An RNA of 177 nucleotides, treated with DMS and 2A3 and read out base by base.
For DMS, 5,522 sequencing reads were counted.
For 2A3 the reverse transcriptase was SuperScript II with manganese.
RNA sequence: GGGAACGACUCGAGUAGAGUCGAAAACGAUAGAAGCAUUCAUGAUGAGGUACCAAAAGUCAAGAAGCGUCACGAACAAAAUAGUGGUCACAAAUCAAGAAGGAAUAGCGCAUAUAGUUAUUACAGCCAAUUUCUAUGUGUUCGCACAUAGAAAUUGAAAAGAAACAACAACAACAAC
Reactivity to DMS in 0.01 (KOAc 150mM, MgCl2 10mM, bicine 150mM(pH8.5), 24C), signal-to-noise 6, nucleotides 027 to 126: c080g010a130u000a060g010a110a120g010c050a050u000u000c060a080u010g010a050u000g000a090g020g000u000a060c030c040a050a060a110a130g010u000c070a060a110g010a090a100g010c050g010u000c040a050c060g000a080a090c070a040a060a060a060u000a070g020u010g010g010u010c070a080c110a040a070a050u010c080a070a080g020a080a100g010g000a040a030u000a050g010c060g000c100a040u010a080u000a050g010u000u000a040u000u000a060c160a070g000c120
Reactivity to 2A3 in 0.01 (KOAc 150mM, MgCl2 10mM, bicine 150mM(pH8.5), 24C), signal-to-noise 5, nucleotides 027 to 126: c040g030a040u070a130g110a110a010g010c020a050u060u070c020a010u070g050a040u050g030a030g080g040u060a040c010c010a030a060a070a040g060u050c050a040a050g070a080a010g090c010g060u060c030a020c100g050a100a010c060a060a120a030a030u130a040g050u050g040g000u020c030a020c020a060a110a030u090c040a040a040g070a050a010g080g050a050a050u020a050g020c040g000c110a020u110a010u020a140g040u070u040a060u100u100a050c030a010g050c020
It was measured as part of the RMDB library OK2TRN. DMS (dimethyl sulfate) methylates the pairing face of unpaired adenines and cytosines.